[RMDB]
RNA sequence: GGGAACGACUCGAGUAGAGUCGAAAAAUCGACCACUCUUGCUCGUCAACAAUGAACGGCAGCAAGAACUCAAGAAGAGGCCUGUAAUCUUCCUCACGCUUACGAUCUACAAGCUUAUAGAAAGUCUCAAGUGCUGUAUUUUGGCUCGCUGAUACGCCUAAACCUACUCGUUCGCGAGUAGGUUUAGAAAAGAAACAACAACAACAAC
Reactivity to DMS in 0.01 (KOAc 150mM, MgCl2 10mM, bicine 150mM(pH8.5), 24C), signal-to-noise 2, nucleotides 027 to 156: a100u010c020g030a150c010c000a020c010u020c000u000u020g050c000u010c150g050u000c070a110a120c030a130a140u020g030a040a160c130g030g030c000a040g000c000a070a070g020a020a090c040u000c120a030a110g010a120a160g020a160g020g020c030c000u010g000u010a050a180u000c010u000u010c000c020u000c090a150c080g050c070u000u000a080c070g030a110u000c030u000a070c030a040a090g010c030u000u010a110u020a150g000a070a070a080g050u010c030u000c050a070a120g020u000g010c070u020g000u010a050u000u000u010u000g030g020c040u000c020g050c020u010g010a130u000a050c050g000c040
Reactivity to 2A3 in 0.01 (KOAc 150mM, MgCl2 10mM, bicine 150mM(pH8.5), 24C), signal-to-noise 3, nucleotides 027 to 156: a010u040c010g050a030c000c010a020c020u000c010u010u010g030c010u020c080g000u010c000a080a140c020a090a290u300g040a150a020c070g020g000c000a000g010c010a010a010g010a000a040c020u040c110a040a040g020a030a010g020a060g030g040c020c020u070g090u210a070a080u030c020u040u030c030c000u020c010a040c040g040c010u090u110a030c110g070a070u040c010u070a020c020a070a010g040c000u060u090a080u030a120g100a050a120a010g040u000c010u000c090a050a060g020u040g030c040u040g030u180a140u050u080u070u030g010g020c000u000c030g040c030u040g030a040u040a100c030g040c040
This 207-nucleotide RNA was probed chemically with DMS and 2A3. 2A3 adducts were read by reverse transcription with SuperScript II with manganese. For DMS the reverse transcriptase was MarathonRT. The RNA was probed in 150 mM KOAc, 10 mM MgCl2 and 150 mM bicine (pH 8.5) at 24 C.